This 207-nucleotide RNA was probed chemically with 2A3. Source: RMDB library RFM130, as collected in RNAgym. The RNA was probed in 150 mM KOAc, 10 mM MgCl2 and 150 mM bicine (pH 8.5) at 24 C. Reactivities are given for positions 27 through 156. The 2A3 profile rests on 686 reads.

[RMDB]
RNA sequence: GGGAACGACUCGAGUAGAGUCGAAAACAACAAUACUAAGGCGCAAAGUGGGGAAAAGUAAACGAUGACCCAUCACCAAGUCUACGUUAGAAUGAUAUAUUAAUAUGUAAAAUAUGAUUGUGAACUCUGGGUAGUCCUAUGGUUUGCACUAUUGUAACAAGUAGAUUUCGUUCGCGAAAUCUACUUGAAAAGAAACAACAACAACAAC
Reactivity to 2A3 in 0.01 (KOAc 150mM, MgCl2 10mM, bicine 150mM(pH8.5), 24C), signal-to-noise 2, nucleotides 027 to 156: c020a050a010c000a030a020u040a100c010u140a070a040g100g000c030g030c060a060a060a060g030u010g010g010g000g000a010a100a020a080g100u160a070a130a040c050g020a020u030g060a040c020c000c010a050u160c020a000c030c030a070a020g040u000c020u080a070c030g050u040u010a000g010a080a080u030g010a010u040a050u030a030u190u260a140a050u170a050u250g000u110a110a280a050a000u070a060u060g060a040u010u170g050u050g120a030a030c010u000c050u020g060g000g000u040a050g030u070c010c010u030a020u040g000g030u000u000u080g050c020a000c040u150a070u040u160g110u150a090a020